[RMDB]
RNA sequence: GGGAACGACUCGAGUAGAGUCGAAAAGGUUGCUAACGGCAACCCGGGGUGACCCGCGGGACAGUGCCACAGAAAACAGACCGCCCGGCCGACAGCGGCCGGGUAAGGGUGAAACGGUGGUGUAAGAGUAUCUAAAAUACUUCGGUAUUUUAGAUACAAAAGAAACAACAACAACAAC
Reactivity to DMS in 0.01 (KOAc 150mM, MgCl2 10mM, bicine 150mM(pH8.5), 24C), signal-to-noise 3, nucleotides 027 to 126: g010g010u000u010g010c000u010a070a100c240g010g030c000a020a020c000c000c030g020g000g020g000u010g010a200c020c020c010g020c080g020g010g000a130c110a180g020u010g000c000c020a010c000a060g000a110a100a110a160c090a030g000a030c000c020g000c000c000c000g010g020c010c000g010a120c300a260g000c050g020g030c010c000g030g010g010u000a010a000g000g010g000u000g000a040a110a260c120g010g030u000g010g010u000g000u010a090a100g000a180
Reactivity to 2A3 in 0.01 (KOAc 150mM, MgCl2 10mM, bicine 150mM(pH8.5), 24C), signal-to-noise 1, nucleotides 027 to 126: g000g000u020u000g000c010u050a150a050c070g100g000c000a010a010c000c010c000g000g000g000g000u040g050a140c010c000c010g000c080g000g040g030a030c030a070g150u040g100c010c000a010c010a030g120a040a100a020a010c020a010g110a080c010c000g040c010c000c010g000g010c030c030g060a090c030a240g300c090g050g010c040c000g010g010g000u010a010a020g010g000g000u030g000a060a100a000c030g010g000u000g040g000u030g080u040a030a020g050a030